[RMDB]
RNA sequence: GGGAACGACUCGAGUAGAGUCGAAAAAUGAAAUUAAGCAGGAAGACGGUUCCAUUUACCAAGGUAGCCUCAUGCAGACUUGGCCAGUUCGUCAAAGUCGCCCUGUUGCUCAAAAGCUUAUCCCAGUCGAGCCUUUGGUUACAGGUCAACGGGUUAAAUUACGUCAUUUAUUCGUAAAUGACGUAAUAAAAGAAACAACAACAACAAC
Reactivity to DMS in 0.01 (KOAc 150mM, MgCl2 10mM, bicine 150mM(pH8.5), 24C), signal-to-noise 3, nucleotides 027 to 156: a060u000g010a050a050a090u000u000a060a070g030c050a080g000g020a100a060g020a060c060g010g010u000u000c020c000a110u000u000u000a100c070c040a070a080g010g000u000a170g020c030c050u000c110a080u000g000c040a130g030a070c020u010u000g020g000c020c070a170g020u010u010c040g000u010c030a080a050a110g000u000c060g010c060c010c010u000g010u000u000g010c010u010c040a030a060a050a070g010c020u000u000a120u010c040c030c030a160g030u010c040g020a090g010c020c000u000u000u010g010g020u000u000a030c080a030g010g020u000c020a050a060c020g000g000g000u000u000a050a080
Reactivity to 2A3 in 0.01 (KOAc 150mM, MgCl2 10mM, bicine 150mM(pH8.5), 24C), signal-to-noise 4, nucleotides 027 to 156: a000u100g020a020a010a020u130u130a090a070g020c020a020g040g030a080a040g030a020c060g020g000u030u030c020c010a030u080u100u090a080c040c020a050a020g030g020u040a010g090c030c020u060c020a010u140g040c040a040g020a070c010u020u020g010g010c010c000a090g050u090u140c030g020u060c030a030a010a050g020u020c000g010c010c000c000u010g010u060u030g010c010u050c170a060a090a040a000g010c010u060u060a080u070c020c030c030a030g070u120c050g020a000g000c000c000u030u050u030g040g000u080u050a040c020a050g030g020u020c020a040a040c070g040g010g010u060u110a010a160
An RNA of 207 nucleotides, treated with DMS and 2A3 and read out base by base. The reactions ran in a buffer of 150 mM KOAc, 10 mM MgCl2 and 150 mM bicine (pH 8.5), at 24 C.